RNA sequence: GGGAACGACUCGAGUAGAGUCGAAAACACACUACAGCAUGUGACAAGUGCGCAAAAGUAGAAAAGUUUGUUGGACCAGUGGUAGCAGCACCUCUUGCAAUUCAUGGCACUGACGAAACAUGUGUGCAUGGCGUUAGUGUCAAUGUCAAAGUCACCCUCUGCAACCUAAAUUCGUUUAGGUUGCAGAAAAAGAAACAACAACAACAAC
Reactivity to DMS in 0.01 (KOAc 150mM, MgCl2 10mM, bicine 150mM(pH8.5), 24C), signal-to-noise 1, nucleotides 027 to 156: c030a160c100a070c030u000a080c030a100g020c060a090u020g010u000g020a110c050a100a100g030u000g050c030g030c010a050a080a060a170g000u000a060g010a060a060a110a100g000u000u000u000g040u010u010g010g000a070c010c010a150g060u000g000g030u000a050g000c030a050g040c020a020c070c000u000c000u000u010g020c020a060a150u000u000c050a160u000g000g000c010a000c020u010g000a070c030g020a070a110a090c010a040u050g020u000g040u000g010c040a030u010g030g010c030g000u000u000a010g020u000g010u010c000a000a030u000g060u000c050a060a050a070g000u000c020a110c020c020c060
Reactivity to 2A3 in 0.01 (KOAc 150mM, MgCl2 10mM, bicine 150mM(pH8.5), 24C), signal-to-noise 2, nucleotides 027 to 156: c080a000c000a000c020u090a020c020a030g000c020a090u090g050u120g120a020c030a050a020g000u050g060c020g000c020a050a030a000a140g030u010a050g100a030a170a110a080g000u030u050u110g040u050u170g050g060a060c060c020a040g010u060g070g030u050a020g090c030a020g010c020a010c010c010u050c020u060u090g000c010a020a200u120u130c010a000u010g000g000c000a000c010u040g000a000c030g010a080a190a010c020a020u040g120u140g120u180g260c010a000u000g060g060c000g000u000u010a000g010u000g000u000c010a030a000u020g000u000c000a040a000a070g010u040c030a060c030c000c000